[RMDB]
RNA sequence: GGGAACGACUCGAGUAGAGUCGAAAACUGCACCGAGCCGAAGCUGGCCACCACGAUGCUCGAUGCAUUCUGUGCGGGCAGCAGUCGCAACGUCACCUCCGUGAUGACGCCCAGCGUGCCUUCGCUGGCCUGUCCUUAAGUUCGCUUAAGGACAGGCAAAAGAAACAACAACAACAAC
Reactivity to 2A3 in 0.01 (KOAc 150mM, MgCl2 10mM, bicine 150mM(pH8.5), 24C), signal-to-noise 4, nucleotides 027 to 126: c020u020g000c010a020c020c040g040a010g010c020c020g080a070a020g010c050u060g120g010c010c000a050c040c010a030c020g030a030u070g000c010u030c110g100a060u180g010c020a030u110u050c060u160g050u030g030c030g030g000g020c000a010g000c000a000g080u060c030g010c060a060a030c010g000u000c010a020c020c030u130c060c060g040u100g050a130u040g030a030c030g030c010c000c020a020g020c020g050u040g050c000c030u100u090c020g040c060u030g080
Reactivity to DMS in 0.01 (KOAc 150mM, MgCl2 10mM, bicine 150mM(pH8.5), 24C), signal-to-noise 4, nucleotides 027 to 126: c100u000g000c040a040c040c020g010a090g010c020c040g000a090a100g000c060u000g000g010c020c030a070c070c030a070c150g000a070u000g020c010u000c190g000a100u010g000c000a030u000u010c110u000g030u000g020c100g010g010g000c020a080g030c020a070g010u000c040g010c050a100a160c050g000u000c020a020c010c040u020c180c130g010u020g020a030u000g010a050c110g010c060c060c050a070g000c030g010u000g000c050c050u010u000c030g000c070u010g000